Notes:
Conditions: 150 mM KOAc, 10 mM MgCl2 and 150 mM bicine (pH 8.5), 24 C. The record gives the reactivity of an RNA of 207 nucleotides to 2A3. Reactivities are rounded to 0.1 and cut off at 0 and 3.

[RMDB]
RNA sequence: GGGAACGACUCGAGUAGAGUCGAAAACUCAAUGUAGGGAAUAACAUUGAAUUGAUACAAAUAUCUUUUUCGGUGUAGGGAAAAACACCGAAUUGAUACAAAUACCUUUCUCAAUGUAGGGAAUAACAAAACAGGCAUCGCUUCGGCGAUGCCUGAAGUAUCUUACUCGGUUCGCCGAGUAAGAUACAAAAGAAACAACAACAACAAC
Reactivity to 2A3 in 0.01 (KOAc 150mM, MgCl2 10mM, bicine 150mM(pH8.5), 24C), signal-to-noise 4, nucleotides 027 to 156: c010u020c010a020a060u060g040u090a140g060g100g070a130a150u160a110a010c000a020u010u020g040a070a090u080u130g030a080u110a220c050a010a120a040u040a030u020c030u010u040u010u040u060c010g000g020u010g020u050a070g120g020g050a050a070a040a010a000c000a000c000c000g000a000a000u000u000g010a000u000a010c030a020a060a000u070a040c010c020u010u040u020c060u020c040a040a100u110g020u070a030g020g020g040a040a070u100a120a060c080a030a060a020a010c010a000g000g020c000a000u000c010g020c010u070u070c220g050g000c000g000a000u000g010c000c000u000g000a010a000
Overview: 2A3 adducts were read by reverse transcription with SuperScript II with manganese. It was measured as part of the RMDB library M2RFPK.